[RMDB]
RNA sequence: GGGAACGACUCGAGUAGAGUCGAAAACGGAAGCAUUAAAACCAUUCGAGCUAGUCAAUGCGUGGCGUGUCUCUCCGCAGCGUGUUGGCGAAUGUAAAGAGUGACUAAUCAUGUAGUACCGAGGAUGAUAAGAGCAAUUCGUUCGCGAAUUGCUCAAGUAUAAACAUUACUUCGGUAAUGUUUAUACAAAAGAAACAACAACAACAAC
Reactivity to DMS in 0.01 (KOAc 150mM, MgCl2 10mM, bicine 150mM(pH8.5), 24C), signal-to-noise 5, nucleotides 027 to 156: c050g000g010a130a150g020c030a060u000u000a070a100a100a100c040c020a080u000u010c020g000a290g030c030u010a160g020u000c030a040a030u000g010c030g030u000g010g030c010g020u000g000u000c090u010c060u000c250c010g040c020a070g010c030g020u000g030u010u010g010g010c010g010a070a050u000g010u000a040a110a160g000a070g010u000g000a100c020u000a130a110u000c080a050u000g000u000a080g010u000a100c050c020g020a130g010g010a100u000g010a130u010a070a140g000a030g010c010a020a020u000u010c000g030u000u010c300g030c020g010a020a010u000u000g020c000u000c010a000a060
Reactivity to 2A3 in 0.01 (KOAc 150mM, MgCl2 10mM, bicine 150mM(pH8.5), 24C), signal-to-noise 9, nucleotides 027 to 156: c040g020g030a060a030g020c030a040u060u140a060a040a030a080c040c010a020u050u070c050g030a040g040c040u050a020g030u020c000a000a010u010g000c000g020u030g090g010c020g010u090g050u030c030u010c010u000c110c000g000c000a010g010c000g000u010g010u020u000g000g000c010g010a020a020u070g030u080a050a100a010g020a000g010u020g010a010c030u070a070a050u090c060a040u080g040u110a060g050u050a100c020c060g010a050g090g010a050u110g020a030u120a220a110g000a000g000c000a000a000u000u000c000g020u040u050c130g000c000g110a000a000u000u000g000c000u000c000a000a000